[RMDB]
RNA sequence: GGGAACGACUCGAGUAGAGUCGAAAAGGCCACCUUCUUCACCCGUUCCGCGAGGAGCCUCCGUAUGAGCAGGUCCCUCUGAUACGCGCUGUAGGCCCGGAGCUCGGCCGGUGAGAACAGGUGCGCCCACUUGGACCGAGUUCGCUCGGUCCAAGUGAAAAGAAACAACAACAACAAC
Reactivity to DMS in 0.01 (KOAc 150mM, MgCl2 10mM, bicine 150mM(pH8.5), 24C), signal-to-noise 2, nucleotides 027 to 126: g020g000c030c000a030c010c000u000u000c060u010u000c030a040c030c010c100g000u000u000c050c050g000c120g020a230g010g030a100g000c000c010u010c070c020g000u000a070u010g010a000g030c230a040g000g000u000c060c030c000u000c000u000g010a070u000a070c060g010c210g040c210u010g020u000a060g000g020c040c020c000g000g000a280g010c050u030c110g000g020c280c180g000g000u020g000a020g000a050a080c120a040g000g000u000g020c180g000c010c020
Reactivity to 2A3 in 0.01 (KOAc 150mM, MgCl2 10mM, bicine 150mM(pH8.5), 24C), signal-to-noise 1, nucleotides 027 to 126: g000g010c040c000a000c020c030u040u040c010u170u150c050a030c050c050c040g070u190u050c010c040g030c070g050a050g050g030a050g030c000c000u010c020c020g100u100a090u180g150a070g040c060a000g090g040u070c010c010c010u100c000u000g060a040u030a180c040g060c030g000c130u120g050u130a010g000g060c060c030c010g070g000a050g030c050u070c130g040g000c000c030g010g010u010g000a030g020a020a030c050a050g000g020u000g040c080g000c020c010